Structure probing data (DMS and 2A3) for a 177-nucleotide construct. For DMS the reverse transcriptase was MarathonRT. The RNA was probed in 150 mM KOAc, 10 mM MgCl2 and 150 mM bicine (pH 8.5) at 24 C. High DMS reactivity at an A or C suggests that its Watson-Crick edge is free.
RNA sequence: GGGAACGACUCGAGUAGAGUCGAAAAGGGCGUCAUUUCGAUGACGCCCAUACGUCUACACCGAUUGGCGAGGACGACGCCGACGGGCGCGUUUGCCAAUCGCACCGUCCAGAUUCGUCUGGACGAAUAGAUCAAUGUCUUUCGAGACAUUGAUCUAAAAAGAAACAACAACAACAAC
Reactivity to DMS in 0.01 (KOAc 150mM, MgCl2 10mM, bicine 150mM(pH8.5), 24C), signal-to-noise 6, nucleotides 027 to 126: g020g010g020c000g020u000c000a020u000u010u010c210g030a010u010g000a020c000g010c000c000c000a000u000a020c200g010u000c050u000a110c130a150c270c030g000a010u000u000g010g000c010g000a120g000g010a030c020g020a150c000g030c000c000g000a110c300g020g010g000c000g020c010g000u010u000u010g000c010c000a000a010u000c000g020c180a050c140c010g000u000c000c000a000g000a030u000u020c170g000u000c000u000g000g000a010c000g010a050a060
Reactivity to 2A3 in 0.01 (KOAc 150mM, MgCl2 10mM, bicine 150mM(pH8.5), 24C), signal-to-noise 5, nucleotides 027 to 126: g000g010g010c020g020u010c010a010u050u070u140c200g080a020u020g000a000c000g000c000c000c000a000u010a000c000g020u000c030u080a090c060a060c070c020g020a010u010u020g010g010c050g030a090g090g080a060c020g090a140c010g040c010c020g120a260c180g090g000g000c020g000c000g000u010u030u120g010c010c000a010a000u010c000g000c000a050c000c050g000u000c000c000a000g000a030u030u070c110g080u010c110u000g010g010a000c000g000a000a040